Source information:
The record gives the reactivity of an RNA of 207 nucleotides to 2A3 and DMS. The DMS profile rests on 1,804 reads. The reactions ran in a buffer of 150 mM KOAc, 10 mM MgCl2 and 150 mM bicine (pH 8.5), at 24 C. For 2A3, 3,932 sequencing reads were counted. For DMS the reverse transcriptase was MarathonRT.
[RMDB]
RNA sequence: GGGAACGACUCGAGUAGAGUCGAAAAGAAAGAAAGAAAGAAAGGUAUGAAGUCCUAUUCACGCUGGAUAGGAUAAACUUCAUAUUGAUCGUGUAUGUGCUAACGCACAUACACGAAUGCGCAUGCAGAACUGCAUGCAUGAACAUAUAGCGUGCAAGCUGAGUGAAAAUUUCGAUUUUCACUCAGCAAAAGAAACAACAACAACAAC
Reactivity to 2A3 in 0.01 (KOAc 150mM, MgCl2 10mM, bicine 150mM(pH8.5), 24C), signal-to-noise 4, nucleotides 027 to 156: g030a010a070a000g060a030a050a010g060a030a090a010g070a100a110a020g010g000u010a000u000g000a000a000g020u020c010c000u000a000u000u020c050a010c100g020c110u110g010g000a000u000a000g000g000a020u100a030a040a000c000u010u000c000a000u000a010u040u080g040a030u020c010g000u000g000u000a000u000g020u000g000c050u110a110a070c190g010c000a000c000a000u000a000c000a000c000g000a010a000u030g020c030g000c010a000u010g000c000a000g090a300a090c240u030g000c000a000u000g000c010a020u090g030a010a020c050a010u140a010u080a190g040c020g010u060g030c020a040a080
Reactivity to DMS in 0.01 (KOAc 150mM, MgCl2 10mM, bicine 150mM(pH8.5), 24C), signal-to-noise 1, nucleotides 027 to 156: g010a060a050a130g000a020a050a110g000a050a010a150g000a110a140a220g020g010u000a020u000g000a000a000g020u000c000c010u000a020u000u020c000a130c090g000c200u010g010g000a010u020a000g000g010a140u020a060a140a060c010u020u000c020a030u000a020u000u000g040a110u000c000g060u000g000u020a000u000g010u010g010c000u000a160a130c300g000c000a000c020a010u000a020c010a010c000g010a020a020u000g060c080g030c000a020u030g010c010a020g010a100a190c120u010g000c100a070u000g020c060a020u010g020a060a100c020a070u000a210u020a030g020c060g000u000g000c140a110a180